[RMDB]
Source: RMDB library TTRDES, as collected in RNAgym. Chemical mapping of a 177-nucleotide RNA with 2A3 and DMS. The DMS profile rests on 9,982 reads. For 2A3 the reverse transcriptase was SuperScript II with manganese. The reactions ran in a buffer of 150 mM KOAc, 10 mM MgCl2 and 150 mM bicine (pH 8.5), at 24 C. The 2A3 profile rests on 18,914 reads. DMS adducts were read by reverse transcription with MarathonRT. In probing experiments dimethyl sulfate is read out at A N1 and C N3, which are open when not base-paired.
RNA sequence: GGGAACGACUCGAGUAGAGUCGAAAAGAUAUGGAGAUUUGACAGACAUGACUAAUUGUCGGAAACGACAACUAGUCAACAGCUGUAAAUCUCCUAAGUCAAACGGGGUAGGUUCGCCUACCCCGAACGUAUUUGUAUUCUUCGGAAUACAAAUACGAAAAGAAACAACAACAACAAC
Reactivity to 2A3 in 0.01 (KOAc 150mM, MgCl2 10mM, bicine 150mM(pH8.5), 24C), signal-to-noise 5, nucleotides 027 to 126: g000a000u020a010u060g020g000a020g000a020u030u050u120g270a060c010a010g030a020c140a300u300g000a000c030u010a010a020u000u010g010u010c000g010g000a000a020a000c000g010a000c000a000a000c010u010a000g010u030c010a030a010c080a040g010c000u000g000u010a000a000a000u000c000u020c000c000u000a010a000g010u000c030a030a080a140c040g000g020g010g000u010a000g020g060u060u110c300g120c050c000u010a000c000c010c000c000g000a000a000
Reactivity to DMS in 0.01 (KOAc 150mM, MgCl2 10mM, bicine 150mM(pH8.5), 24C), signal-to-noise 4, nucleotides 027 to 126: g000a010u000a040u010g000g000a020g010a010u000u000u000g020a030c000a000g000a030c150a160u020g010a020c000u000a010a020u000u000g010u000c000g020g000a010a010a030c000g010a010c000a010a000c030u000a010g010u000c000a080a060c220a140g000c010u000g010u000a020a010a010u000c000u000c000c000u000a010a050g010u000c010a100a150a240c040g010g010g010g020u000a010g000g010u000u020c300g020c000c000u000a010c000c000c000c000g000a010a020